[RMDB]
RNA sequence: GGGAACGACUCGAGUAGAGUCGAAAACAGAGUCGUGGAACCCAGGCUCAGUAACAACGAAUGUUCGUGCACAUUUCGUGAAAUUUGUCUGCAUGAAGGAGUCACAUUUGAGGUUCACGUGAAUACAUAUUAAUGGGCUCUUCGGAGCCCAUUAAUAAAAAGAAACAACAACAACAAC
Reactivity to DMS in 0.01 (KOAc 150mM, MgCl2 10mM, bicine 150mM(pH8.5), 24C), signal-to-noise 1, nucleotides 027 to 126: c060a200g000a020g010u000c000g030u000g000g000a150a110c050c010c000a170g030g000c070u000c000a180g020u020a040a050c130a120a020c090g010a030a070u000g030u000u000c010g020u000g000c050a010c030a020u000u010u010c000g020u000g000a120a100a090u000u010u000g000u000c160u000g020c020a010u000g000a050a060g000g000a090g000u000c070a070c130a130u000u010u000g030a090g010g010u000u000c040a040c050g010u000g030a050a090u000a130c210a120
The record gives the reactivity of an RNA of 177 nucleotides to DMS. The reactions ran in a buffer of 150 mM KOAc, 10 mM MgCl2 and 150 mM bicine (pH 8.5), at 24 C.